[RMDB]
RNA sequence: GGGAACGACUCGAGUAGAGUCGAAAAGGUUUUUGAUGUAGGGCUCGAUCAGUGGGCGAAAGCUCAGGUCGAUUGCUCUAGUGGUUUGGUUUGUGACCUGGUUGCUCGCUGAGAGUUGAACCAUUAGCUAAAUAAUUUAAUUCGUUAAAUUAUUUAGAAAAGAAACAACAACAACAAC
Reactivity to 2A3 in 0.01 (KOAc 150mM, MgCl2 10mM, bicine 150mM(pH8.5), 24C), signal-to-noise 1, nucleotides 027 to 126: g070g000u040u000u010u060u120g070a050u050g050u110a030g000g000g000c030u010c000g000a050u000c030a090g080u040g000g000g000c000g040a000a020a000g020c000u010c010a010g040g000u020c010g000a010u000u250g000c000u000c000u000a020g010u010g070g030u030u040u050g020g000u030u030u050g000u010g070a010c000c000u000g000g010u020u020g000c000u000c020g000c020u070g040a000g000a010g080u040u110g100a000a040c000c000a010u030u100a010g000
Reactivity to DMS in 0.01 (KOAc 150mM, MgCl2 10mM, bicine 150mM(pH8.5), 24C), signal-to-noise 3, nucleotides 027 to 126: g000g000u000u000u000u000u000g010a060u020g010u020a020g000g000g010c010u000c010g010a030u010c010a110g020u010g000g000g010c000g010a040a070a130g010c010u010c020a060g000g000u000c000g010a060u030u040g000c010u000c000u000a020g010u000g000g000u000u010u000g010g010u010u010u020g010u020g000a090c060c030u010g010g010u010u010g000c010u000c030g010c170u040g010a170g000a050g010u000u010g000a030a050c010c010a040u020u020a090g010

This 177-nucleotide RNA was probed chemically with 2A3 and DMS. Source: RMDB library OK1LIB, as collected in RNAgym. DMS adducts were read by reverse transcription with MarathonRT. For 2A3 the reverse transcriptase was SuperScript II with manganese.